This 177-nucleotide RNA was probed chemically with DMS and 2A3. The reactions ran in a buffer of 150 mM KOAc, 10 mM MgCl2 and 150 mM bicine (pH 8.5), at 24 C. Values cover nucleotides 27 to 126.
RNA sequence: GGGAACGACUCGAGUAGAGUCGAAAAGCAAUGGCCUUAGACUGGCGCUGCUGCAGCUCCAGCGUGUCCUGUGGUUGCGACAGCAUGUCCAGCGACCAGGAGCACAGCUUGCCGUCCGAGGAUAUGGGUGGCAUUAGCAUUUCGAUGCUAAUGCCACAAAAGAAACAACAACAACAAC
Reactivity to DMS in 0.01 (KOAc 150mM, MgCl2 10mM, bicine 150mM(pH8.5), 24C), signal-to-noise 1, nucleotides 027 to 126: g060c050a070a010u010g000g010c000c000u000u030a080g000a050c000u070g010g020c030g000c110u010g000c020u000g020c280a130g040c000u000c050c090a150g070c250g030u050g000u000c000c000u000g030u050g000g000u000u000g010c000g030a070c230a120g000c060a010u000g000u010c050c030a080g000c110g020a010c000c110a130g000g000a080g000c040a300c020a000g060c000u000u000g000c000c000g000u050c010c000g000a050g000g000a120u000a040u000g010g000
Reactivity to 2A3 in 0.01 (KOAc 150mM, MgCl2 10mM, bicine 150mM(pH8.5), 24C), signal-to-noise 5, nucleotides 027 to 126: g130c050a010a090u130g090g020c000c010u030u020a050g010a070c100u220g000g000c020g030c100u070g000c010u010g000c070a070g000c000u010c000c000a090g100c140g150u240g040u060c000c010u030g120u200g080g040u040u040g020c020g030a070c090a030g010c010a010u090g080u080c000c010a000g000c090g050a010c000c030a020g000g020a000g000c000a000c010a050g010c010u040u240g000c000c000g000u000c000c000g040a030g010g030a010u030a060u080g140g020